[RMDB]
RNA sequence: GGGAACGACUCGAGUAGAGUCGAAAACCAUUCCUUAUAGCUUGAGUAUUGCUGAAUUCAGUUUAGCGUGCAUGCUCUUGGCUAUUCUCAUAGUGAUUGUCAAAUUUGGAGUUACUUAUUCGUCAAUAAAACACUACCACGUUCGCGUGGUAGUGAAGUACUCAUGGUAGUUCGCUACCAUGAGUACAAAAGAAACAACAACAACAAC
Reactivity to DMS in 0.01 (KOAc 150mM, MgCl2 10mM, bicine 150mM(pH8.5), 24C), signal-to-noise 2, nucleotides 027 to 156: c000c040a200u010u000c010c030u000u000a130u000a010g000c000u000u000g030a050g050u000a080u010u010g030c010u000g000a100a070u000u000c150a230g020u010u000u000a090g000c070g030u000g000c140a180u000g040c010u000c000u030u000g030g040c010u000a010u000u000c020u010c080a140u000a100g020u000g000a100u020u000g020u000c040a030a060a260u000u000u010g020g020a110g020u000u000a070c080u000u000a050u010u000c060g020u000c050a080a090u000a070a090a090a160c000a030c000u000a010c000c000a040c000g000u000u000c230g030c060g150u000g000g010u010a000g000u010g010a010a100
Reactivity to 2A3 in 0.01 (KOAc 150mM, MgCl2 10mM, bicine 150mM(pH8.5), 24C), signal-to-noise 5, nucleotides 027 to 156: c030c000a010u080u110c020c020u160u130a010u020a040g000c010u010u040g010a000g010u030a080u190u160g000c020u010g040a130a070u220u260c060a170g170u060u080u100a060g010c070g020u050g050c050a020u040g000c000u010c000u000u090g030g010c000u000a000u050u080c060u000c010a130u110a120g120u080g140a140u070u060g110u080c030a040a080a130u140u060u170g080g000a120g060u150u060a060c050u060u140a100u220u040c090g090u020c090a120a090u090a130a080a020a000c000a000c000u000a000c000c000a010c000g020u050u050c150g020c000g130u000g020g010u000a000g000u000g010a000a000